RNA sequence: GGGAACGACUCGAGUAGAGUCGAAAAUCUGAAGAUGUUCGAAAAGCCGAUGGAAUCGGCAGUCGCCUACGGUCGGAAGACUGGUCAGUGCUCCUGCUGCGGUCGCGAGUUGACCAACCACGCAUCCGGAGGAAAGAUCAUUCGUGAUCUUUCCUCCAAAAGAAACAACAACAACAAC
Reactivity to DMS in 0.01 (KOAc 150mM, MgCl2 10mM, bicine 150mM(pH8.5), 24C), signal-to-noise 2, nucleotides 027 to 126: u000c030u000g000a110a110g020a020u000g020u010u000c050g020a080a120a150a110g020c050c040g010a080u010g000g020a130a300u000c030g000g020c010a030g000u000c130g020c050c030u000a100c030g000g020u000c000g000g030a090a090g000a040c030u000g000g000u000c110a030g000u010g020c030u000c080c030u000g000c040u000g000c150g010g000u000c030g020c140g000a100g010u000u000g000a090c020c060a070a100c060c030a040c090g020c070a090u010c120c210
Reactivity to 2A3 in 0.01 (KOAc 150mM, MgCl2 10mM, bicine 150mM(pH8.5), 24C), signal-to-noise 2, nucleotides 027 to 126: u020c000u040g020a060a010g050a130u100g060u090u110c070g010a070a090a030a020g010c050c010g070a100u080g070g230a200a160u050c030g020g000c000a020g010u020c000g010c010c000u000a030c050g030g000u030c010g010g130a080a000g000a050c020u040g010g000u090c050a030g010u020g160c000u000c010c020u020g010c000u050g020c050g010g020u050c010g000c060g050a070g030u020u080g060a080c000c010a040a040c000c000a080c020g030c010a050u050c030c070